[RMDB]
RNA sequence: GGGAACGACUCGAGUAGAGUCGAAAAGCUCUGAUUCACGUGGCAGAGCAGAAAACACGUGGAAAGCUGAUGUCGAUAAGAUAUCAGCAGUGAGCCAGACAUACGAUACGUAUGUCUGGCUCACGAAGCUCGUAAUUAGCUUCGGCUAAUUACGAGCAAAAGAAACAACAACAACAAC
Reactivity to 2A3 in 0.01 (KOAc 150mM, MgCl2 10mM, bicine 150mM(pH8.5), 24C), signal-to-noise 1, nucleotides 027 to 126: g010c000u060c030u030g030a170u160u030c000a000c010g000u060g060g030c030a030g020a080g100c020a010g110a010a030a000a010c000a000c000g010u000g010g040a090a120a000g060c010u010g000a000u030g000u030c060g060a160u040a300a070g000a040u020a000u000c020a000g010c000a000g000u020g000a000g000c030c000a010g000a000c000a000u000a050c000g300a300u090a300c140g000u010a050u000g000u000c000u070g000g000c000u030c000a010c000g000a010a000